An RNA of 177 nucleotides, treated with 2A3 and DMS and read out base by base. The 2A3 profile rests on 3,031 reads. For DMS, 7,170 sequencing reads were counted. Values cover nucleotides 27 to 126.
RNA sequence: GGGAACGACUCGAGUAGAGUCGAAAAGAAGGAUUUGUAAGAAGGGUAGUUAAUAAUGACGUGCCUUUAAACUUGCGUGAUGUUGAAAUUUAUGAACUUUCGUUGUCUGGUUUAAUUGCUGGCACCCCAUCCAGAGAUAGUUCGCUAUCUCUGGAUGAAAAGAAACAACAACAACAAC
Reactivity to 2A3 in 0.01 (KOAc 150mM, MgCl2 10mM, bicine 150mM(pH8.5), 24C), signal-to-noise 3, nucleotides 027 to 126: g020a000a010g030g040a200u020u070u130g020u030a000a060g020a050a020g080g010g020u040a010g040u080u040a190a080u170a170a130u300g040a030c050g060u100g020c010c000u030u020u060a060a040a020c010u070u150g020c050g090u140g060a080u100g070u090u060g050a050a070a060u070u090u060a050u070g030a020a010c010u030u020u040c040g060u050u060g050u010c040u030g050g040u010u070u100a090a090u160u090g000c010u020g000g020c010a030c000c010c000
Reactivity to DMS in 0.01 (KOAc 150mM, MgCl2 10mM, bicine 150mM(pH8.5), 24C), signal-to-noise 5, nucleotides 027 to 126: g020a050a040g000g010a100u000u010u000g020u000a040a060g010a060a040g000g010g030u010a240g010u010u010a060a090u010a130a110u020g010a040c070g010u010g010c020c010u000u000u000a040a060a120c070u000u010g020c120g010u000g010a040u000g010u000u010g000a050a070a130u000u000u010a060u010g000a030a050c050u000u010u000c030g010u000u010g010u010c020u000g010g010u000u010u000a050a090u010u000g010c060u000g010g010c070a130c020c020c030
Conditions: 150 mM KOAc, 10 mM MgCl2 and 150 mM bicine (pH 8.5), 24 C.